Chemical mapping of a 207-nucleotide RNA with 2A3.
The reactions ran in a buffer of 150 mM KOAc, 10 mM MgCl2 and 150 mM bicine (pH 8.5), at 24 C.
[RMDB]
RNA sequence: GGGAACGACUCGAGUAGAGUCGAAAACGACAUGAUACCACCGUUAUCGGGUCAACAGAGUAGUUGCAAAUGACAACAAUGCUCAGGGUUAUGCUCUCGCUGCCUAAUGGCGGUGCGGGAAACCCACAAAAGAUAUUGAUCUUCGGAUCAAUAUCAACUUCCCCUCUAGCUUCGGCUAGAGGGGAAGAAAAGAAACAACAACAACAAC
Reactivity to 2A3 in 0.01 (KOAc 150mM, MgCl2 10mM, bicine 150mM(pH8.5), 24C), signal-to-noise 2, nucleotides 027 to 156: c020g050a000c000a020u050g000a020u080a060c040c030a060c050c060g080u120u080a060u090c110g060g000g000u070c010a060a040c020a120g000a010g030u050a010g000u010u010g020c060a030a180a250u220g110a120c010a000a020c030a010a220u080g000c020u020c030a010g000g040g000u060u060a120u300g080c000u010c020u010c010g000c000u020g000c000c010u240a300a130u100g020g000c020g030g000u010g000c030g010g000g000a020a010a030c010c050c050a080c010a030a070a010a000g000a000u000a000u000u000g000a000u010c030u040u090c170g120g000a000u010c010a000a000u000a000u000c000a000a000

The data come from the RNA Mapping Database (RMDB), library M2RFPK.